[RMDB]
RNA sequence: GGGAACGACUCGAGUAGAGUCGAAAACUACUGCACUCCAGCCUGGGUGAUAGAACUAGAUUCUGUCUAGUAAAAAGAAAAAAAAGAAAAAGAACAUGGAGGUUGCAGUGAGUUGAGAUUGUGCCACUGCACUCCAGCCUGGGCAACAGAGUGAGAAAGUAUUAAUGCAGUUCGCUGCAUUAAUACUAAAAGAAACAACAACAACAAC
Reactivity to 2A3 in 0.01 (KOAc 150mM, MgCl2 10mM, bicine 150mM(pH8.5), 24C), signal-to-noise 3, nucleotides 027 to 156: c010u100a010c050u080g070c000a000c000u010c010c010a000g000c020c000u010g040g000g010u110g050a110u110a200g100a070a030c010u000a020g010a050u120u140c100u300g100u030c000u000a000g000u060a030a080a050a050a010g100a090a040a020a020a000a000a020a010g080a050a120a010a010a000g050a040a020c040a040u070g010g010a010g080g050u170u250g000c000a000g000u000g040a080g010u040u150g060a130g000a210u100u250g060u160g070c000c000a000c010u000g000c000a000c000u000c000c000a000g000c010c000u010g000g000g010c000a020a020c020a010g020a010g000u040g010a020g040a040a170
Reactivity to DMS in 0.01 (KOAc 150mM, MgCl2 10mM, bicine 150mM(pH8.5), 24C), signal-to-noise 1, nucleotides 027 to 156: c040u000a100c040u010g060c040a030c000u040c010c030a300g000c030c010u010g010g050g040u000g010a180u010a100g020a080a120c010u010a040g000a290u010u000c290u020g020u000c010u000a040g020u000a010a060a090a150a090g030a070a040a010a080a040a050a090a120g010a070a110a060a160a120g010a090a100c050a070u000g020g010a030g010g000u000u000g060c040a040g000u010g010a050g030u010u000g060a100g000a170u020u020g020u000g010c080c010a010c040u010g000c010a100c010u010c000c000a060g000c000c010u000g000g010g030c000a030a030c110a060g020a060g010u000g000a110g000a100a120